Conditions: 150 mM KOAc, 10 mM MgCl2 and 150 mM bicine (pH 8.5), 24 C. This 177-nucleotide RNA was probed chemically with 2A3 and DMS. For 2A3, 4,303 sequencing reads were counted. Reactivities are given for positions 27 through 126.

[RMDB]
RNA sequence: GGGAACGACUCGAGUAGAGUCGAAAAGCAGUUGACUUCGGUCAACUGCAAAUAAAGGUCAAGACGUGCACAGGGAGGAACGUCUUGAGCAACCCAAUAAAAAAACAUGUAAGUUCGCUUACAUGAACGGUAGGAUAGUGUUCGCACUAUCCUACCGAAAAGAAACAACAACAACAAC
Reactivity to 2A3 in 0.01 (KOAc 150mM, MgCl2 10mM, bicine 150mM(pH8.5), 24C), signal-to-noise 3, nucleotides 027 to 126: g000c000a000g000u000u000g000a000c000u010u070c160g060g000u000c000a000a000c000u010g030c000a000a000a000u000a010a000a010g060g060u010c000a000a000g010a000c000g000u050g040c090a050c100a300g150g110g030a120g050g020a040a000c000g000u000c000u010u000g000a020g010c010a030a080c000c000c000a020a030u250a030a080a010a000a000a000a000c010a000u000g000u000a020a000g010u030u120c290g000c090u000u010a000c000a000u010g030a060a020
Reactivity to DMS in 0.01 (KOAc 150mM, MgCl2 10mM, bicine 150mM(pH8.5), 24C), signal-to-noise 1, nucleotides 027 to 126: g010c020a000g000u000u000g000a000c000u000u030c300g000g000u000c000a000a050c000u030g000c000a000a010a100u000a040a080a190g000g010u000c000a070a010g010a010c030g030u000g010c110a140c110a180g000g010g000a160g000g020a300a030c000g000u000c000u000u000g040a000g000c000a100a110c000c000c020a110a160u090a000a050a070a060a050a070a110c010a020u000g000u000a000a000g000u000u020c260g010c030u000u000a000c000a000u000g020a100a090